[RMDB]
RNA sequence: GGGAACGACUCGAGUAGAGUCGAAAAGAUAUGGAGGUUAUUAAGCUUGGAUUUAUCAACCAGGGAAAUAUGGUCGGAAACGACCAUACACCCUGGUUGAUUGUCAGCUUGGAUAACCUCCUAAGUCCGACUGUAUCUUCUUCGGAAGAUACAGUCGAAAAGAAACAACAACAACAAC
Reactivity to DMS in 0.01 (KOAc 150mM, MgCl2 10mM, bicine 150mM(pH8.5), 24C), signal-to-noise 1, nucleotides 027 to 126: g000a100u000a300u000g020g000a080g000g000u010u000a010u000u000a040a010g010c010u000u010g100g000a010u000u000u000a000u000c000a010a000c000c020a000g000g010g000a070a140a300u010a020u000g020g000u000c000g000g000a140a160a300c030g040a000c000c000a000u000a000c160a300c020c020c020u000g000g000u000u000g000a000u000u000g000u000c010a060g010c010u060u000g040g010a000u000a000a000c000c000u000c000c010u000a020a100g000u010c010